[RMDB]
RNA sequence: GGGAACGACUCGAGUAGAGUCGAAAAUGGUCUACUGUUGUCGAAACUGUGGUGCCUUCUCGUCUGUCAAAAUGGGCGGCUGCCCGGUGUGCGACUACUCUGAAAGCGAGGAGUACGAAGUGAACGCAUUCGACGGCGGCACGGUGACAAAAAAGAGGACGUAUUACUGGUUCGCCAGUAAUACGUCAAAAGAAACAACAACAACAAC
Reactivity to 2A3 in 0.01 (KOAc 150mM, MgCl2 10mM, bicine 150mM(pH8.5), 24C), signal-to-noise 3, nucleotides 027 to 156: u160g080g010u040c020u030a040c030u080g050u080u010g030u050c040g060a080a070a020c030u040g020u040g150g170u020g040c030c000u080u060c050u020c020g040u000c030u080g070u050c030a020a050a100a230u160g010g020g040c040g090g050c180u130g010c010c010c010g010g000u130g010u030g010c020g000a020c030u010a010c000u000c010u070g110a240a130a110g140c090g060a070g030g010a010g010u010a030c090g040a130a010g010u030g110a070a000c000g000c000a000u040u110c010g070a060c060g040g010c000g000g000c000a010c060g020g010u010g030a030c000a000a100a000a030a010a000g080a050g050
Reactivity to DMS in 0.01 (KOAc 150mM, MgCl2 10mM, bicine 150mM(pH8.5), 24C), signal-to-noise 1, nucleotides 027 to 156: u000g030g030u000c010u010a010c090u010g010u000u000g010u010c040g010a090a010a130c070u020g020u030g040g040u000g020c040c050u010u010c060u010c000g030u000c060u000g090u000c080a090a030a060a110u000g010g000g060c040g010g000c070u030g000c000c070c020g000g000u000g010u000g000c010g030a190c040u000a040c000u000c040u010g030a110a090a150g000c000g010a300g010g000a050g030u000a060c050g030a090a210g020u010g010a150a100c030g010c040a140u000u010c040g030a050c000g000g070c010g000g000c000a030c070g000g000u040g030a180c030a050a060a110a120a090a000g000a170g010
An RNA of 207 nucleotides, treated with 2A3 and DMS and read out base by base. The RNA was probed in 150 mM KOAc, 10 mM MgCl2 and 150 mM bicine (pH 8.5) at 24 C. Reactivities are given for positions 27 through 156. For 2A3 the reverse transcriptase was SuperScript II with manganese.